RNA sequence: GGGAACGACUCGAGUAGAGUCGAAAAGUUUUUGAGUUUAUGUUUUGUGGUAGUCAGAUGGCCACUGGUAAAUUACUUAUUGCCUACACACCACCUGGUGGAUCUUCUCCAACAACACGGACUGAUGACCGUACUCCAAUUUCGAUUGGAGUACGGUAAAAGAAACAACAACAACAAC
Reactivity to DMS in 0.01 (KOAc 150mM, MgCl2 10mM, bicine 150mM(pH8.5), 24C), signal-to-noise 2, nucleotides 027 to 126: g000u020u000u030u000u010g000a090g000u000u010u020a080u040g000u000u000u030u020g050u020g020g000u040a100g000u000c110a070g000a060u040g000g040c060c020a030c110u000g020g000u000a020a000a050u000u000a060c060u000u010a130u020u000g020c000c010u000a080c100a030c120a020c060c000a100c070c020u000g020g000u000g020g000a020u040c040u000u010c010u000c020c040a030a000c140a010a000c080a060c010g000g000a050c040u030g020a100u000g030
Reactivity to 2A3 in 0.01 (KOAc 150mM, MgCl2 10mM, bicine 150mM(pH8.5), 24C), signal-to-noise 4, nucleotides 027 to 126: g060u100u070u040u120u140g170a110g030u080u110u030a150u140g050u050u090u060u100g050u010g050g030u020a050g090u070c030a050g050a120u040g150g000c000c010a030c030u000g070g040u120a220a210a180u160u060a050c070u070u100a050u090u180g000c010c000u000a000c030a000c000a020c100c000a040c020c010u070g060g040u070g010g050a030u000c000u040u000c020u020c000c000a010a040c040a010a000c010a050c030g000g000a000c000u050g010a040u120g030
The data come from the RNA Mapping Database (RMDB), library OK1LIB. An RNA of 177 nucleotides, treated with DMS and 2A3 and read out base by base. The DMS profile rests on 2,723 reads.